About this RNA: This 177-nucleotide RNA was probed chemically with DMS and 2A3. For DMS the reverse transcriptase was MarathonRT. Conditions: 150 mM KOAc, 10 mM MgCl2 and 150 mM bicine (pH 8.5), 24 C. Source: RMDB library RFMREP, as collected in RNAgym. For DMS, 4,850 sequencing reads were counted. For 2A3, 7,034 sequencing reads were counted. 2A3 adducts were read by reverse transcription with SuperScript II with manganese.
RNA sequence: GGGAACGACUCGAGUAGAGUCGAAAACAAGUCACUAGUGGUUCCGUUUAGUAGAUGAUUAUGCAUUGUUUCAAAAUGGUGCCCUAGUGACUGCAAAAAGAAAUCACUUUGUUCGCAAAGUGAUUUCGAUAAUUCUCUGCUUCGGCAGAGAAUUAUCAAAAGAAACAACAACAACAAC
Reactivity to DMS in 0.01 (KOAc 150mM, MgCl2 10mM, bicine 150mM(pH8.5), 24C), signal-to-noise 3, nucleotides 027 to 126: c060a150a030g010u000c010a000c000u000a000g000u010g040g010u000u000c010c010g030u000u000u000a130g010u010a060g010a020u000g010a070u000u010a150u020g010c090a040u000u000g010u010u000u000c040a090a020a020a010u000g010g010u010g000c000c000c000u000a000g000u000g000a000c000u000g020c180a040a060a050a100a110g000a010a000a000u000c000a010c000u000u000u000g000u000u010c200g020c000a010a000a000g020u000g010a000u000u000u000c000
Reactivity to 2A3 in 0.01 (KOAc 150mM, MgCl2 10mM, bicine 150mM(pH8.5), 24C), signal-to-noise 3, nucleotides 027 to 126: c020a020a020g000u000c000a000c000u010a010g010u080g230g000u020u000c000c010g000u010u010u030a110g030u050a020g020a030u040g030a050u070u250a080u300g110c050a010u010u040g070u080u210u060c040a040a030a010a010u010g000g010u010g000c000c000c010u010a000g000u010g000a000c000u000g000c010a020a030a010a000a050g010a000a010a000u000c000a000c000u010u010u000g040u040u070c180g010c130a010a010a000g000u000g000a000u000u000u010c000